[RMDB]
RNA sequence: GGGAACGACUCGAGUAGAGUCGAAAAUUAGAGCAUUGCGCAGUUGCCACAAGAGAGGCAGGCCACACAGCGCCAUUGCAGUUGCGCAGUUCAAGUUAGCAAGAGAGAGGCGCAGGCAGCAUUCAAGUUGCGCAGCAGCGCGCUUAGGCCACACAGCCGUGGUUGUGUUAUUCGUAACACAACCACGAAAAGAAACAACAACAACAAC
Reactivity to 2A3 in 0.01 (KOAc 150mM, MgCl2 10mM, bicine 150mM(pH8.5), 24C), signal-to-noise 2, nucleotides 027 to 156: u100u060a030g030a010g140c040a070u130u210g070c020g000c070a020g010u050u040g000c050c000a020c040a140a070g060a060g000a050g060g030c070a030g050g020c010c010a080c010a020c010a110g010c000g000c060c050a070u080u050g030c000a000g060u100u010g030c030g000c040a010g020u060u020c020a050a000g100u060u070a000g060c030a140a000g010a000g000a020g010a050g090g000c040g000c020a000g140g000c010a010g020c010a020u080u120c060a090a040g080u070u110g020c030g000c010a030g020c010a010g040c050g000c020g010c000u010u040a020g050g020c080c020a070c020a010c020a030g130c020